[RMDB]
RNA sequence: GGGAACGACUCGAGUAGAGUCGAAAAUCUCCUCUCUCUAGGAUCUCAGAGAGUCUCGAAGAGAGGAAGUCUCGAGACUUCGACUUCUCGAUCAGUCUCUCAGGAGAAGAGGACUUCAGGAAGGACUCUUCGACUGAGAAGUCUCCUGAUCCUAGUCCUUCCAGAAGUACUUCGGUACUUCUGGAAGAAAAGAAACAACAACAACAAC
Reactivity to 2A3 in 0.01 (KOAc 150mM, MgCl2 10mM, bicine 150mM(pH8.5), 24C), signal-to-noise 2, nucleotides 027 to 156: u010c030u000c000c000u010c000u000c010u010c010u000a000g000g030a060u030c040u050c200a060g180a030g000a050g130u030c030u040c050g140a220a140g020a030g000a040g040g020a040a020g010u000c040u090c240g290a300g020a050c010u040u020c020g070a060c050u130u030c020u050c020g100a130u060c030a020g050u000c020u000c000u000c050a000g000g020a030g000a000a000g000a000g000g020a020c000u030u070c140a140g200g160a120a020g010g010a040c000u000c000u000u010c000g010a010c000u000g000a000g010a010a010g020u000c010u000c030c020u020g000a010u000c000c000u000a010g030u090c010